The data come from the RNA Mapping Database (RMDB), libraries RFM100 and RFMREP. The record gives the reactivity of an RNA of 177 nucleotides to DMS and 2A3. For DMS the reverse transcriptase was MarathonRT.
RNA sequence: GGGAACGACUCGAGUAGAGUCGAAAAGACGCUGUUGCGAUGAGGAUAUUAUGCUCCCUCUUCUGAAGGCAUUGAGGACGCUCGCUGGCAGAAUCGAACCAAUUAUUAAAGCCACCACUGAGUAAAACAGUUUGGGAUAUUUCGAUAUCCCAAACUGAAAAGAAACAACAACAACAAC
Reactivity to DMS in 0.01 (KOAc 150mM, MgCl2 10mM, bicine 150mM(pH8.5), 24C), signal-to-noise 2, nucleotides 027 to 126: g020a040c190g010c050u020g000u010u010g030c070g000a090u050g000a080g000g000a160u000a040u000u000a110u030g000c010u010c030c010c020u010c070u010u000c060u000g000a170a070g000g020c060a030u000u010g000a070g000g000a070c090g040c040u000c030g030c030u000g000g050c040a070g020a010a060u000c050g000a100a150c050c020a110a020u010u030a010u030u020a030a100a120g000c040c010a040c000c010a060c080u000g010a120g000u000a040a020a060a140
Reactivity to 2A3 in 0.01 (KOAc 150mM, MgCl2 10mM, bicine 150mM(pH8.5), 24C), signal-to-noise 3, nucleotides 027 to 126: g070a020c050g020c060u070g030u120u050g010c040g030a040u100g010a060g100g000a040u040a050u280u170a110u300g040c040u010c020c000c010u050c010u090u020c050u100g020a040a010g030g010c020a050u010u110g040a030g010g090a030c030g040c040u020c060g020c020u040g030g010c030a000g050a070a040u050c020g010a020a020c010c000a050a030u060u000a030u080u100a080a070a030g070c000c000a010c010c040a010c010u050g040a040g120u140a010a130a020a000

2A3 is a SHAPE reagent: it acylates the 2'-hydroxyl of flexible nucleotides of all four kinds.